Description
An RNA of 177 nucleotides, treated with DMS and 2A3 and read out base by base. The reactions ran in a buffer of 150 mM KOAc, 10 mM MgCl2 and 150 mM bicine (pH 8.5), at 24 C. It was measured as part of the RMDB library OK2TST. For 2A3, 5,253 sequencing reads were counted.
RNA sequence: GGGAACGACUCGAGUAGAGUCGAAAAGGGAGAGUUGGACGCUAUUAUUCCUGACGUUCAGAGUAUUGGGCAAAGAAUUCAAGUUGAAGGGACAACUACAAAAUCCUUGUUAUGGCAGGCACUGACCCAUGGUUACAGUGUUCGCACUGUAACCAUGAAAAGAAACAACAACAACAAC
Reactivity to DMS in 0.01 (KOAc 150mM, MgCl2 10mM, bicine 150mM(pH8.5), 24C), signal-to-noise 7, nucleotides 027 to 126: g010g010g010a110g010a090g020u000u000g020g020a060c070g020c050u010a070u010u010a150u010u000c060c050u010g000a100c100g010u000u000c040a050g000a120g020u010a090u000u000g010g010g000c050a060a060a100g010a060a080u000u000c120a070a080g000u000u000g000a100a090g010g010g010a060c060a020a030c040u000a090c180a050a040a060a090u010c040c030u000u000g010u000u000a070u010g000g010c030a030g000g010c050a060c060u000g000a090c090c080
Reactivity to 2A3 in 0.01 (KOAc 150mM, MgCl2 10mM, bicine 150mM(pH8.5), 24C), signal-to-noise 5, nucleotides 027 to 126: g010g000g010a050g010a010g060u050u090g020g000a010c030g000c050u050a060u220u040a100u160u170c040c020u040g040a050c050g020u050u030c040a010g000a010g070u090a120u140u140g020g000g000c060a090a050a020g070a090a110u110u100c050a090a020g040u040u060g080a050a030g040g000g010a020c010a060a020c050u120a050c080a020a160a020a030u050c010c000u040u040g050u080u090a070u060g030g000c000a000g010g030c010a010c070u030g040a050c020c020